The record gives the reactivity of an RNA of 177 nucleotides to DMS and 2A3. DMS (dimethyl sulfate) methylates the pairing face of unpaired adenines and cytosines. The RNA was probed in 150 mM KOAc, 10 mM MgCl2 and 150 mM bicine (pH 8.5) at 24 C. For DMS, 617 sequencing reads were counted. It was measured as part of the RMDB library OK2TST. Values cover nucleotides 27 to 126.
RNA sequence: GGGAACGACUCGAGUAGAGUCGAAAACAACUCCACGCGGAGUUCGAGCCUGGCAAUUGCCGCGUGCUCAACGGCUCCAUUAAUCCGAAGACCAUGGAUAAGGCGUGCACGUACACUGCCGAUGACAGUAGGGCACAAGUUUCGACUUGUGCCCUACAAAAGAAACAACAACAACAAC
Reactivity to DMS in 0.01 (KOAc 150mM, MgCl2 10mM, bicine 150mM(pH8.5), 24C), signal-to-noise 1, nucleotides 027 to 126: c240a110a020c010u000c030c070a100c270g020c200g020g020a090g030u000u000c200g000a170g020c000c030u000g010g010c000a300a030u010u010g030c080c090g000c050g000u010g000c000u000c040a100a080c080g010g000c030u000c040c020a090u000u030a120a090u000c040c080g010a170a100g000a090c030c050a000u000g000g010a010u000a080a120g000g000c180g080u000g000c020a140c140g020u010a120c000a010c080u000g000c000c050g000a070u010g030a040c200a040
Reactivity to 2A3 in 0.01 (KOAc 150mM, MgCl2 10mM, bicine 150mM(pH8.5), 24C), signal-to-noise 2, nucleotides 027 to 126: c050a010a020c030u030c080c040a060c140g140c120g050g000a000g000u000u010c070g010a010g050c000c020u000g010g000c050a130a300u090u300g070c080c180g000c050g060u140g020c000u010c020a030a040c090g000g040c010u000c010c020a010u060u190a070a040u010c000c060g120a090a020g120a050c010c020a060u140g010g000a020u000a040a070g000g020c030g000u000g000c020a010c120g000u010a000c040a000c020u130g000c030c010g030a060u140g030a040c060a060